Chemical mapping of a 177-nucleotide RNA with DMS and 2A3. 2A3 is a SHAPE reagent: it acylates the 2'-hydroxyl of flexible nucleotides of all four kinds. The 2A3 profile rests on 7,481 reads. The reactions ran in a buffer of 150 mM KOAc, 10 mM MgCl2 and 150 mM bicine (pH 8.5), at 24 C. For 2A3 the reverse transcriptase was SuperScript II with manganese.

RNA sequence: GGGAACGACUCGAGUAGAGUCGAAAACGUCGCCGGUUUGGGCUUCUCUCCUUUGCGCGGAGACGCAUGAGAACCUCGAUAAGCGCAAGCUUACCGAAACUCAUGUGCAGGCUUUGAAAGCCCGGACGAAUUUCACGUUUUUCGAAACGUGAAAUUCAAAAGAAACAACAACAACAAC
Reactivity to DMS in 0.01 (KOAc 150mM, MgCl2 10mM, bicine 150mM(pH8.5), 24C), signal-to-noise 3, nucleotides 027 to 126: c130g000u010c020g010c010c040g020g020u000u020u020g010g000g020c000u000u000c040u000c000u000c030c010u000u010u010g020c080g020c300g000g000a020g010a040c010g020c000a010u000g010a000g010a060a120c300c120u010c000g010a030u000a000a000g000c000g030c270a070a110g020c000u000u000a020c020c000g000a010a070a150c000u000c000a000u000g000u000g010c030a050g000g000c150u030u020u010g000a300a050a020g000c000c000c000g000g020a050c060
Reactivity to 2A3 in 0.01 (KOAc 150mM, MgCl2 10mM, bicine 150mM(pH8.5), 24C), signal-to-noise 6, nucleotides 027 to 126: c070g080u080c030g010c060c030g030g020u020u040u030g010g000g000c000u030u020c030u010c000u020c030c030u090u140u220g110c130g010c050g020g010a020g010a020c010g000c000a000u000g000a000g020a040a030c020c060u010c000g000a010u000a000a010g000c020g020c130a100a060g000c000u000u000a000c010c000g000a060a020a010c000u000c000a000u010g010u010g000c010a020g070g040c030u190u120u130g060a070a030a000g010c000c000c000g000g000a010c020